[RMDB]
RNA sequence: GGGAACGACUCGAGUAGAGUCGAAAACGGGAGUUGAGACUGGUGUGUGUUUAGUGGAUUAUCUGAUCAGCACAUGUGUGACAGUGUUGAUCACAAGUCAUUGCCAGCUCUGUUCAUUUUCUUCCCUACAUUUCAGAAACUUCGGUUUCUGAAAUGUAAAAGAAACAACAACAACAAC
Reactivity to DMS in 0.01 (KOAc 150mM, MgCl2 10mM, bicine 150mM(pH8.5), 24C), signal-to-noise 1, nucleotides 027 to 126: c160g020g020g000a040g040u000u010g000a050g010a110c010u000g000g010u000g040u010g020u010g020u010u000u010a090g010u000g010g000a080u000u000a080u010c160u010g010a030u000c010a010g010c010a010c030a090u000g020u000g030u000g020a080c100a050g010u000g000u010u000g010a020u000c010a010c110a050a060g000u010c010a030u000u000g000c030c010a010g010c010u010c000u000g010u010u000c100a150u020u000u010u010c150u000u000c000c010c020u000
Reactivity to 2A3 in 0.01 (KOAc 150mM, MgCl2 10mM, bicine 150mM(pH8.5), 24C), signal-to-noise 2, nucleotides 027 to 126: c010g050g050g020a030g050u130u080g080a030g090a180c000u020g000g000u010g000u030g030u010g040u020u140u190a190g010u090g140g050a110u090u030a110u250c030u010g010a010u000c000a000g030c000a010c060a190u060g010u030g080u140g110a040c040a080g000u010g000u020u020g010a000u040c010a010c010a010a020g000u020c010a030u010u130g000c000c000a000g000c020u000c010u000g000u050u010c010a040u030u070u000u000c010u000u020c000c000c000u010
Source information: Source: RMDB library RFMREP, as collected in RNAgym. Structure probing data (DMS and 2A3) for a 177-nucleotide construct. The reactions ran in a buffer of 150 mM KOAc, 10 mM MgCl2 and 150 mM bicine (pH 8.5), at 24 C. For DMS the reverse transcriptase was MarathonRT. 2A3 adducts were read by reverse transcription with SuperScript II with manganese.